[RMDB]
RNA sequence: GGGAACGACUCGAGUAGAGUCGAAAACUCAUCGGACGCUCGGAUGCCACCGGCAACAACAUGGUCGUCGCACGACUCGGGUGGGACGAAGUACGUGUCUACUCGCGCAACUCGGGCACCAUGACGCGUUUUACUGCCCAUUCGUGGGCAGUAAAACAAAAGAAACAACAACAACAAC
Reactivity to DMS in 0.01 (KOAc 150mM, MgCl2 10mM, bicine 150mM(pH8.5), 24C), signal-to-noise 1, nucleotides 027 to 126: c070u000c000a060u000c160g010g000a070c140g020c020u030c040g010g000a200u010g000c030c050a040c180c020g010g020c040a050a090c230a080a040c130a080u000g000g000u000c030g030u000c030g010c030a130c030g000a010c090u000c060g010g010g030u000g000g010g020a040c020g000a080a120g020u000a060c060g010u000g010u000c010u000a070c100u000c070g010c180g000c080a040a040c140u010c000g010g010g030c060a110c050c000a080u000g000a040c050g000c200
Reactivity to 2A3 in 0.01 (KOAc 150mM, MgCl2 10mM, bicine 150mM(pH8.5), 24C), signal-to-noise 1, nucleotides 027 to 126: c010u020c010a040u090c080g050g030a050c080g020c020u060c000g060g000a030u090g030c040c030a100c090c100g100g000c010a050a040c020a040a000c000a140u110g100g010u030c120g080u060c110g000c110a040c080g150a110c060u020c070g100g060g050u000g010g000g070a070c040g040a090a050g120u160a040c040g000u030g040u050c000u030a070c000u040c060g020c000g030c000a020a070c010u020c050g020g030g000c020a030c020c010a030u050g000a020c010g000c020
This 177-nucleotide RNA was probed chemically with DMS and 2A3.
The reactions ran in a buffer of 150 mM KOAc, 10 mM MgCl2 and 150 mM bicine (pH 8.5), at 24 C.
2A3 adducts were read by reverse transcription with SuperScript II with manganese.
The data come from the RNA Mapping Database (RMDB), library OK2TST.
For 2A3, 1,058 sequencing reads were counted.
For DMS the reverse transcriptase was MarathonRT.